Description: An RNA of 177 nucleotides, treated with DMS and 2A3 and read out base by base. For DMS, 1,241 sequencing reads were counted. High 2A3 reactivity points to a flexible backbone, as in loops and unpaired stretches. Source: RMDB library M2PK90, as collected in RNAgym. The 2A3 profile rests on 1,021 reads. Values cover nucleotides 27 to 126. Conditions: 150 mM KOAc, 10 mM MgCl2 and 150 mM bicine (pH 8.5), 24 C.
RNA sequence: GGGAACGACUCGAGUAGAGUCGAAAAACAAAUUCAACUUUUCACCUACCCUGCAAACUUGAACCCUCCUACAAUCAAACUACCUCCUAUAAAAUCCAAUCCUCUACUUUACCAAUCCGAAAAAAAAACGUAAUAUUAGGUUCGCCUAAUAUUACGUAAAAGAAACAACAACAACAAC
Reactivity to DMS in 0.01 (KOAc 150mM, MgCl2 10mM, bicine 150mM(pH8.5), 24C), signal-to-noise 2, nucleotides 027 to 126: a090c060a030a070a080u020u000c090a060a050c040u000u010u000u000c070a080c070c020u000a090c060c040c090u000g010c050a050a070a110c040u000u010g000a090a130c030c030c050u000c040c030u010a060c110a120a060u000c040a040a080a060c060u000a050c060c000u000c030c020u020a070u000a020a060a070a120u000c040c010a090a080u000c030c000u000c020u010a070c020u000u000u010a080c030c060a060a160u000c050c020g010a000a000a050a060a050a050a070a060
Reactivity to 2A3 in 0.01 (KOAc 150mM, MgCl2 10mM, bicine 150mM(pH8.5), 24C), signal-to-noise 1, nucleotides 027 to 126: a000c040a040a080a040u120u130c020a020a100c040u130u100u090u100c020a030c020c010u030a040c020c020c040u010g010c000a040a140a210c080u050u060g060a070a100c020c030c000u000c000c000u020a060c070a060a150u110c020a010a130a130c010u070a080c010c010u010c000c000u060a060u050a140a110a020a050u060c020c000a000a000u030c020c000u020c010u020a030c040u040u030u060a030c010c010a000a100u030c020c030g120a180a020a040a020a020a000a000a000